RNA sequence: GGGAACGACUCGAGUAGAGUCGAAAAUGGGGUUCUGCGACCCCUGUGACAGGUCGCUACCGCUGCGGGGUAAAAACUUUGUGUUUUUUCGAACCCUUUGACAUGUGCAGUAUGAGUGUUCCGCGGCGUGUAUUAUUUAUUUCGAUAAAUAAUACACAAAAGAAACAACAACAACAAC
Reactivity to DMS in 0.01 (KOAc 150mM, MgCl2 10mM, bicine 150mM(pH8.5), 24C), signal-to-noise 5, nucleotides 027 to 126: u020g010g010g000g010u000u010c040u010g000c080g000a030c000c000c040c060u000g010u030g000a090c190a190g000g010u000c030g000c030u000a070c040c030g000c020u000g000c020g000g000g000g000u000a020a020a020a020a020c020u020u050u040g010u030g000u000u000u000u000u000u000c090g000a050a060c000c000c000u000u010u020g010a090c090a070u010g010u030g010c050a080g010u010a070u020g010a110g010u000g010u000u010c010c010g010c040g010g020c130
Reactivity to 2A3 in 0.01 (KOAc 150mM, MgCl2 10mM, bicine 150mM(pH8.5), 24C), signal-to-noise 7, nucleotides 027 to 126: u080g010g000g000g010u020u040c040u080g020c020g020a020c000c000c010c040u060g150u050g050a060c040a020g010g010u020c010g000c020u040a030c000c030g010c050u040g010c000g000g000g000g020u050a010a010a000a000a010c030u070u220u180g120u080g040u040u010u000u010u010u030c020g020a030a020c010c000c000u010u030u040g010a010c020a020u130g070u100g050c030a010g030u080a090u160g040a020g030u050g020u040u010c010c010g060c020g070g010c060